This 177-nucleotide RNA was probed chemically with DMS. The RNA was probed in 150 mM KOAc, 10 mM MgCl2 and 150 mM bicine (pH 8.5) at 24 C. The DMS profile rests on 8,149 reads.

[RMDB]
RNA sequence: GGGAACGACUCGAGUAGAGUCGAAAAGAAAGCUCCUCAACCGUGUGGAGGAGAAUGGCUAUAACCACCGAAACCUGAGGAAACAGGAAGCCACAACGCAAGCCAUGUGGUUGGCACACGGAAGAAAAAUGGGUAGCUAUUUCGAUAGCUACCCAUUAAAAGAAACAACAACAACAAC
Reactivity to DMS in 0.01 (KOAc 150mM, MgCl2 10mM, bicine 150mM(pH8.5), 24C), signal-to-noise 5, nucleotides 027 to 126: g020a060a110a140g000c020u010c000c000u000c020a100a120c030c000g030u010g000u000g010g000a030g000g000a040g000a030a070u040g000g000c020u010a080u060a090a160c050c040a170c070c020g010a110a130a080c010c010u000g000a140g000g010a070a120a130c030a010g000g000a100a070g000c010c010a030c170a060a100c130g000c200a100a090g010c080c120a110u010g010u000g010g010u000u000g010g000c010a010c030a010c000g000g000a210a060g010a020a070a030